[RMDB]
Overview: Chemical mapping of a 177-nucleotide RNA with 2A3 and DMS. The RNA was probed in 150 mM KOAc, 10 mM MgCl2 and 150 mM bicine (pH 8.5) at 24 C. The DMS profile rests on 1,395 reads. For DMS the reverse transcriptase was MarathonRT. It was measured as part of the RMDB library OK1LIB.
RNA sequence: GGGAACGACUCGAGUAGAGUCGAAAAUACAAAUAAGGUCUCCACUGAUGAGAAAAGGGACGCACAUAUUUUUUACGGAAUGUGAAACGAAAUGUGGAGAGAUUUGAGGGAGUCAUGCGUUCCAGCGCUGCACGAUGACGUUCGCGUCAUCGUGCAGAAAAGAAACAACAACAACAAC
Reactivity to 2A3 in 0.01 (KOAc 150mM, MgCl2 10mM, bicine 150mM(pH8.5), 24C), signal-to-noise 2, nucleotides 027 to 126: u110a010c000a010a120a000u130a130a030g180g020u000c000u050c070c000a000c000u060g000a070u120g030a150g130a030a020a060a000g020g000g010a000c000g160c000a050c030a000u040a140u000u060u000u040u110u300a040c120g050g110a050a080u020g050u000g000a030a000a020c070g010a090a150a070u020g000u050g000g000a000g010a000g010a080u060u080u220g030a180g010g030g000a030g000u030c030a070u100g060c020g000u010u050c000c000a100g030c070g000
Reactivity to DMS in 0.01 (KOAc 150mM, MgCl2 10mM, bicine 150mM(pH8.5), 24C), signal-to-noise 2, nucleotides 027 to 126: u020a120c100a040a150a080u030a070a200g050g000u030c020u000c000c000a030c020u010g000a180u100g000a250g020a040a010a060a220g000g000g000a030c000g000c080a150c000a000u000a000u000u000u010u000u130u010a110c200g000g030a030a080u000g010u040g000a000a010a120c190g000a110a090a190u000g000u020g000g030a030g020a000g000a060u000u000u000g060a220g000g000g010a030g000u010c020a080u010g010c020g000u030u010c000c000a090g070c200g010